[RMDB]
Conditions: 150 mM KOAc, 10 mM MgCl2 and 150 mM bicine (pH 8.5), 24 C.
The record gives the reactivity of an RNA of 177 nucleotides to DMS.
The DMS profile rests on 1,094 reads.

RNA sequence: GGGAACGACUCGAGUAGAGUCGAAAACUGAUAAAACGCGUUACAUUGUCUCUAAACAUGAAAUACCACCCCCUUUAAUUGUUUACAGUCAGAUUAUUGGUGCGGACAGCACUAACGCUUUGUCACAGCAUAAUACCUCGUUCGCGAGGUAUUAUGCAAAAGAAACAACAACAACAAC
Reactivity to DMS in 0.01 (KOAc 150mM, MgCl2 10mM, bicine 150mM(pH8.5), 24C), signal-to-noise 2, nucleotides 027 to 126: c090u010g000a020u010a090a010a030a110c190g010c060g000u000u000a090c100a150u000u000g010u000c000u000c090u000a060a060a030c020a010u020g020a120a040a080u010a080c120c160a300c080c010c000c030c040u000u000u000a030a080u000u000g000u000u000u000a030c180a070g000u000c050a020g020a080u000u000a110u010u000g010g020u000g020c040g020g040a120c130a160g010c030a000c010u000a020a000c020g000c000u000u000u000g000u010c040a030c160a140